[RMDB]
RNA sequence: GGGAACGACUCGAGUAGAGUCGAAAAGAUAUGGAGCUUUGACAUGUCCACUCUGUCAAUGAUGUGAACAUGUUCGGAAACGAACAUGUUCAUUGAGACAGUUGGACAACAGCAAAGCUCCUAAGUCCUCAGAUUGUAGGUUCGCCUACAAUCUGAGAAAAGAAACAACAACAACAAC
Reactivity to 2A3 in 0.01 (KOAc 150mM, MgCl2 10mM, bicine 150mM(pH8.5), 24C), signal-to-noise 1, nucleotides 027 to 126: g120a050u160a130u300g030g000a000g000c040u000u050u060g090a240c030a170u050g010u000c000c000a040c110u170c010u020g000u070c000a030a300u210g070a040u100g000u000g010a010a000c000a000u010g020u050u000c000g040g120a090a040a040c000g000a020a010c000a000u000g000u000u000c010a000u000u010g020a000g000a010c000a000g010u000u000g000g000a020c010a030a020c030a010g080c000a000a000a000g020c020u000c000c000u000a010a000g020u010c010
Reactivity to DMS in 0.01 (KOAc 150mM, MgCl2 10mM, bicine 150mM(pH8.5), 24C), signal-to-noise 1, nucleotides 027 to 126: g000a180u000a270u010g010g040a050g010c000u000u000u000g000a070c110a300u010g010u010c000c000a020c230u000c000u000g020u000c000a190a180u030g020a100u000g020u000g000a000a020c000a000u000g020u000u000c010g000g010a120a090a190c000g010a000a000c000a010u000g000u000u010c000a000u000u000g000a190g010a000c000a000g000u000u000g000g000a010c010a020a040c300a110g000c000a000a000a020g010c000u000c000c000u000a020a060g010u000c020